RNA sequence: GGGAACGACUCGAGUAGAGUCGAAAAAGGCUCCUGGCCUGGCUCUGACCUGCUCUUAAUUAACCUCUCCUUCACCUGACUAACUCCUGCCUCCCCGAUCUGUUCCUUUCAGCAGAAACUAACGGCUGCUGUUAUUCAGUUUCGACUGAAUAACAGCAAAAGAAACAACAACAACAAC
Reactivity to 2A3 in 0.01 (KOAc 150mM, MgCl2 10mM, bicine 150mM(pH8.5), 24C), signal-to-noise 6, nucleotides 027 to 126: a000g030g000c030u020c020c050u090g070g010c010c000u020g030g000c020u020c040u060g050a060c000c000u010g030c000u020c010u060u180a200a180u090u090a090a080c000c010u040c010u030c000c010u020u040c040a040c010c020u040g030a040c020u060a070a020c020u030c020c000u030g010c020c000u020c000c000c000c000g010a040u000c030u040g020u040u040c020c000u020u070u050c020a020g010c000a010g050a110a090a040c040u080a110a010c060g040g010c020u020
Reactivity to DMS in 0.01 (KOAc 150mM, MgCl2 10mM, bicine 150mM(pH8.5), 24C), signal-to-noise 2, nucleotides 027 to 126: a040g000g000c050u000c080c080u010g000g000c030c040u000g010g050c030u020c010u010g010a050c040c020u000g010c000u010c090u020u040a100a060u050u000a040a210c050c050u050c040u060c020c040u000u000c120a090c090c020u010g040a030c030u000a050a090c030u000c050c020u000g000c100c000u010c010c000c000c060g000a000u010c060u000g000u000u020c000c010u010u010u030c070a060g000c040a020g020a130a060a020c190u030a040a110c100g000g000c140u040

Annotation:
Chemical mapping of a 177-nucleotide RNA with 2A3 and DMS. For 2A3, 4,684 sequencing reads were counted. The DMS profile rests on 1,921 reads. Source: RMDB library RFM100, as collected in RNAgym.